[RMDB]
RNA sequence: GGGAACGACUCGAGUAGAGUCGAAAACGUGCGAAAGCACGUCGCAUUGCUGCGAUACCAGACAUGAGGAUCACCCAUGUACCAAGGUACGAAAAUAACAUGUCCCUUGGCAGCGCAGCAAUGCGUAGACUGCCAUAGCUUUCGAGCUAUGGCAGUCAAAAGAAACAACAACAACAAC
Reactivity to 2A3 in 0.01 (KOAc 150mM, MgCl2 10mM, bicine 150mM(pH8.5), 24C), signal-to-noise 2, nucleotides 027 to 126: c010g000u000g000c010g050a160a010a030g000c000a010c000g000u010c010g010c000a000u000u000g010c000u000g000c010g030a040u040a090c050c020a010g040a040c010a000u050g020a190g110g030a180u200c030a190c070c010c000a020u090g000u000a020c020c010a020a010g030g010u010a010c040g080a070a060a070a050u270a070a040c070a100u150g000u000c000c020c000u020u020g030g000c040a040g070c000g000c000a000g000c010a000a000u000g000c000g010u010a000
Reactivity to DMS in 0.01 (KOAc 150mM, MgCl2 10mM, bicine 150mM(pH8.5), 24C), signal-to-noise 2, nucleotides 027 to 126: c000g030u000g020c000g000a170a110a250g000c010a000c000g000u000c010g000c000a010u000u000g020c010u000g020c000g000a070u000a090c060c050a160g000a080c000a000u010g000a100g010g010a240u010c280a130c040c010c040a070u030g000u000a100c010c030a120a060g020g020u000a000c020g010a050a060a030a140u000a130a110c150a090u000g020u000c000c130c040u000u010g030g050c190a020g000c000g000c010a010g010c000a010a000u000g000c000g050u010a040
The record gives the reactivity of an RNA of 177 nucleotides to 2A3 and DMS. The RNA was probed in 150 mM KOAc, 10 mM MgCl2 and 150 mM bicine (pH 8.5) at 24 C. It was measured as part of the RMDB library OK2TRN. DMS adducts were read by reverse transcription with MarathonRT.